[RMDB]
RNA sequence: GGGAACGACUCGAGUAGAGUCGAAAAACACGAGGGAGGAAGUGCUGAGAUCGACGCUCGGGAAGACCAUCAGCGCCGCUGAGUUAAAUCACUAUGCUCAAGAAGUGAGAUACGGCCACGAGUCCAAUCAGAUGCUUACAUUCGUGUAAGCAUCUGAAAAAGAAACAACAACAACAAC
Reactivity to 2A3 in 0.01 (KOAc 150mM, MgCl2 10mM, bicine 150mM(pH8.5), 24C), signal-to-noise 1, nucleotides 027 to 126: a000c040a010c070g010a010g020g080g020a060g000g020a110a030g020u080g060c080u090g040a030g000a090u060c030g060a040c030g030c010u020c000g000g010g010a040a040g020a030c040c000a090u080c060a010g040c080g090c060c030g030c100u030g000a010g110u070u190a070a130a050u050c010a000c030u100a100u240g010c020u030c090a080a000g130a110a030g060u080g020a030g000a050u080a080c040g000g030c030c020a060c030g010a000g020u000c010c000a010a010
Reactivity to DMS in 0.01 (KOAc 150mM, MgCl2 10mM, bicine 150mM(pH8.5), 24C), signal-to-noise 3, nucleotides 027 to 126: a090c050a080c110g020a100g020g010g000a090g010g000a070a080g000u020g040c040u000g020a100g000a100u010c020g000a080c060g010c060u000c080g000g000g010a070a150g010a070c030c020a120u000c040a080g000c100g020c120c120g010c060u000g000a060g000u010u000a030a060a110u010c050a020c020u000a070u000g000c060u040c150a060a060g000a100a070g020u000g010a070g010a150u000a060c090g030g010c000c070a080c050g000a060g020u010c010c110a070a150